[RMDB]
RNA sequence: GGGAACGACUCGAGUAGAGUCGAAAAAGAAUAACAAAUUUAUGAUUUUGUGUCUUUGUUUGUUCGGACACAUUAUCUAUACGAAUAAGAACGGUUGAGGGCAUUCGUAUUCAACUGCCAGAGGUGACCGGGAUGUAUAAUUCGUUAUACAUCCCGGAAAAGAAACAACAACAACAAC
Reactivity to DMS in 0.01 (KOAc 150mM, MgCl2 10mM, bicine 150mM(pH8.5), 24C), signal-to-noise 2, nucleotides 027 to 126: a030g030a120a050u040a110a120c090a050a050a080u000u010u020a040u020g000a040u000u010u000u010g010u010g000u000c000u000u020u030g010u020u020u020g000u000u000c040g010g030a020c020a000c000a010u000u000a010u000c000u010a080u000a020c140g010a040a050u020a050a230g050a100a100c080g000g020u020u000g010a140g020g000g040c150a120u000u070c080g020u000a060u000u000c050a030a050c070u000g000c020c010a090g010a060g010g020u000g000a180
Reactivity to 2A3 in 0.01 (KOAc 150mM, MgCl2 10mM, bicine 150mM(pH8.5), 24C), signal-to-noise 4, nucleotides 027 to 126: a020g170a050a060u260a090a050c090a030a110a070u130u230u090a120u260g020a000u000u000u000u020g030u000g010u010c000u040u070u050g100u180u090u050g050u030u060c020g000g000a000c020a000c000a000u010u000a000u000c000u010a040u020a050c060g030a020a020u110a220a030g120a090a020c060g010g100u090u100g060a080g020g040g010c070a070u110u120c010g010u070a040u010u130c040a050a020c030u070g080c050c010a040g020a060g060g100u070g060a030
Annotation:
The record gives the reactivity of an RNA of 177 nucleotides to DMS and 2A3. 2A3 adducts were read by reverse transcription with SuperScript II with manganese. Source: RMDB libraries RFM100 and RFMREP, as collected in RNAgym. DMS adducts were read by reverse transcription with MarathonRT. Reactivities are given for positions 27 through 126.